An RNA of 177 nucleotides, treated with 2A3 and DMS and read out base by base.
Reactivities are given for positions 27 through 126.
It was measured as part of the RMDB library OK2TST.
DMS adducts were read by reverse transcription with MarathonRT.
The reactions ran in a buffer of 150 mM KOAc, 10 mM MgCl2 and 150 mM bicine (pH 8.5), at 24 C.
RNA sequence: GGGAACGACUCGAGUAGAGUCGAAAACGCAGUCGUUCGACAACAAGAAAAUGUCGGAAUACGUCGAGCGCUCGAUCGACGCCAUGAAAGAGGACCUGUCCGAGAAGGACUGGGGAAUCGUCGGUGGCGAUGGGAGUCAGUUCGCUGACUCCCAUCGAAAAGAAACAACAACAACAAC
Reactivity to 2A3 in 0.01 (KOAc 150mM, MgCl2 10mM, bicine 150mM(pH8.5), 24C), signal-to-noise 2, nucleotides 027 to 126: c020g010c030a000g070u110c010g040u000u050c000g000a030c010a080a010c040a100a070g110a140a160a050a060u140g040u040c060g020g080a120a120u170a110c050g000u000c010g040a020g060c000g000c030u020c020g030a040u030c040g030a030c030g000c010c000a040u090g100a050a140a100g020a030g020g000a010c010c010u000g010u000c030c000g060a040g180a230a050g010g000a000c030u070g000g020g010g040a000a040u000c010g030u030c030g080g000u000g040g000
Reactivity to DMS in 0.01 (KOAc 150mM, MgCl2 10mM, bicine 150mM(pH8.5), 24C), signal-to-noise 2, nucleotides 027 to 126: c050g010c120a130g010u010c040g070u010u000c020g040a080c010a100a110c060a170a110g030a010a160a070a080u000g000u000c010g000g000a040a100u030a290c040g000u000c020g000a030g000c000g000c090u000c110g010a070u010c030g000a120c000g030c000c000a060u000g010a040a060a120g010a050g010g000a300c000c060u000g000u010c000c000g030a140g010a120a070g000g000a030c030u030g000g000g000g000a300a130u000c000g010u000c040g010g000u000g000g030